The data come from the RNA Mapping Database (RMDB), library M2PK90. An RNA of 177 nucleotides, treated with DMS and read out base by base. The RNA was probed in 150 mM KOAc, 10 mM MgCl2 and 150 mM bicine (pH 8.5) at 24 C. For DMS, 1,008 sequencing reads were counted.
[RMDB]
RNA sequence: GGGAACGACUCGAGUAGAGUCGAAAAUACUACGCGGCCUCCCACCUCUCUGCCCGGAGCCGGCCCCCCGCCCAGAGACCCGGCCGGCUCCCACCGUCGCUUGGUCGACGACCCGCCGCGCCAACAAAUACAUCUAGACUUUCGAGUCUAGAUGUAUAAAAGAAACAACAACAACAAC
Reactivity to DMS in 0.01 (KOAc 150mM, MgCl2 10mM, bicine 150mM(pH8.5), 24C), signal-to-noise 1, nucleotides 027 to 126: u000a070c080u000a050c030g000c030g030g010c030c060u000c020c010c010a200c090c020u000c040u000c030u000g020c070c100c140g010g020a030g030c020c030g000g000c000c010c030c010c030c020g030c040c050c050a180g020a140g000a070c080c040c260g000g030c000c000g000g000c000u000c000c030c070a020c110c040g030u000c010g000c010u010u020g000g030u000c010g010a050c010g000a110c060c090c040g000c020c030g030c030g000c020c030a060a020c090a080a130